[RMDB]
RNA sequence: GGGAACGACUCGAGUAGAGUCGAAAAAUGACACGGGGCGGGCGAAAGCCUGUUCACAGCCGGUUUCCGGGCCCGUCAUCCGGGUGGGUUGCGAGAGGCGGCAUGCAAAUGCCGUCCCAGAUGAAUGCUUUGACAAUGGAUUCGUCCAUUGUCAAAGAAAAGAAACAACAACAACAAC
Reactivity to 2A3 in 0.01 (KOAc 150mM, MgCl2 10mM, bicine 150mM(pH8.5), 24C), signal-to-noise 2, nucleotides 027 to 126: a000u090g040a040c010a010c040g000g000g030g000c000g010g030g000c020g030a070a040a000g000c000c000u020g000u040u030c010a000c000a030g070c020c030g050g000u000u050u000c030c020g010g080g000c000c030c000g040u040c030a120u020c020c040g020g040g010u090g010g040g000u050u210g100c060g020a100g010a040g050g000c000g000g000c000a000u030g040c030a000a090a090u000g000c010c000g030u090c030c000c010a080g010a040u100g140a150a050u160g010
Reactivity to DMS in 0.01 (KOAc 150mM, MgCl2 10mM, bicine 150mM(pH8.5), 24C), signal-to-noise 4, nucleotides 027 to 126: a070u010g000a050c060a090c100g010g000g010g000c000g010g020g000c010g010a100a070a100g010c000c000u000g010u000u010c100a060c120a150g010c010c050g000g000u000u000u000c050c040g010g020g020c020c010c020g010u000c050a090u010c050c050g000g000g010u020g010g010g000u000u000g010c050g010a120g000a110g020g000c000g000g000c000a010u000g000c280a080a140a010u000g010c000c010g020u010c010c010c020a060g020a120u020g000a110a110u040g010